[RMDB]
RNA sequence: GGGAACGACUCGAGUAGAGUCGAAAAAUCAAAAUUCUGAGGGAACAGGACAAGCAGCAGAUCUCAAAAGCACUCAAGCAGCAAUCAACCAAAUCAAUGGGAAGCUGAAUAGGUUGAUCGGGAAAACGUCAUCCGAACUGUUCGCAGUUCGGAUGACAAAAGAAACAACAACAACAAC
Reactivity to 2A3 in 0.01 (KOAc 150mM, MgCl2 10mM, bicine 150mM(pH8.5), 24C), signal-to-noise 1, nucleotides 027 to 126: a000u180c130a070a140a020a020u130u000c010u100g080a070g000g000g000a000a110c000a010g000g010a000c070a130a000g170c050a000g060c000a000g010a120u030c050u070c000a220a180a000a000g000c000a000c030u140c000a000a070g000c070a000g020c000a000a010u080c070a000a000c020c000a040a120a160u160c090a030a030u090g000g000g210a000a000g010c030u000g000a000a000u120a120g010g000u000u090g000a050u000c000g040g000g000a060a060a060a060c060

Background:
The record gives the reactivity of an RNA of 177 nucleotides to 2A3. Reactivities are rounded to 0.1 and cut off at 0 and 3.